[RMDB]
RNA sequence: GGGAACGACUCGAGUAGAGUCGAAAAGAUAUGGACUCGGAAAAAACGUUCCUUUCGCGAUAAGAUGCGCUCGGAAACGAGCGGCAUCUUUUGACGCGAUUCGACGUUUUUUCCGAGUCCUAAGUCAGUUAGGGGAAUACUUCGGUAUUCCCCUAACAAAAGAAACAACAACAACAAC
Reactivity to DMS in 0.01 (KOAc 150mM, MgCl2 10mM, bicine 150mM(pH8.5), 24C), signal-to-noise 2, nucleotides 027 to 126: g000a050u010a300u010g020g000a010c010u000c000g000g010a000a030a010a010a010a010c000g010u010u010c010c030u000u000u000c000g040c000g010a190u000a030a000g010a000u000g020c010g040c000u010c000g000g000a100a130a240c000g000a000g040c000g040g040c000a000u000c000u000u000u000u000g000a240c070g020c000g000a010u000u010c280g000a030c000g000u020u000u000u000u010u000c000c000g000a000g000u000c010c000u010a000a060g000u000c040a080